[RMDB]
RNA sequence: GGGAACGACUCGAGUAGAGUCGAAAAGAGGACAAUCAAGCGGCUGGCAAGGACACAGACCGAUGGCUCGUGAUCCAGUUGUACCGAGGGUGCGAACAGCAUGAGUGGCGACGACGCCGGGCCGGGCCUCACCAGCAUUGUUCGCAAUGCUGGUGAGAAAAGAAACAACAACAACAAC
Reactivity to 2A3 in 0.01 (KOAc 150mM, MgCl2 10mM, bicine 150mM(pH8.5), 24C), signal-to-noise 1, nucleotides 027 to 126: g040a020g020g000a040c040a050a140u110c070a140a020g120c040g030g000c010u030g040g020c060a090a110g040g000a030c020a010c030a100g040a140c000c030g080a080u080g020g000c010u030c030g040u030g010a100u080c020c000a020g070u030u020g010u110a090c040c030g000a080g080g210g000u030g000c070g000a110a020c040a090g010c020a000u060g010a030g010u200g000g040c060g040a020c040g030a030c060g000c060c000g020g020g000c000c000g050g010g000c000
Reactivity to DMS in 0.01 (KOAc 150mM, MgCl2 10mM, bicine 150mM(pH8.5), 24C), signal-to-noise 2, nucleotides 027 to 126: g000a040g020g000a070c070a090a070u010c120a120a140g020c040g040g000c020u000g000g010c060a190a100g000g040a080c050a050c060a040g000a130c050c050g000a120u040g010g000c040u000c050g010u000g010a130u000c030c050a130g010u000u000g010u010a080c000c010g000a220g020g020g020u000g000c040g030a040a090c170a070g030c020a020u010g000a220g010u010g030g020c060g000a040c040g010a040c130g030c020c000g000g030g010c030c030g020g010g000c070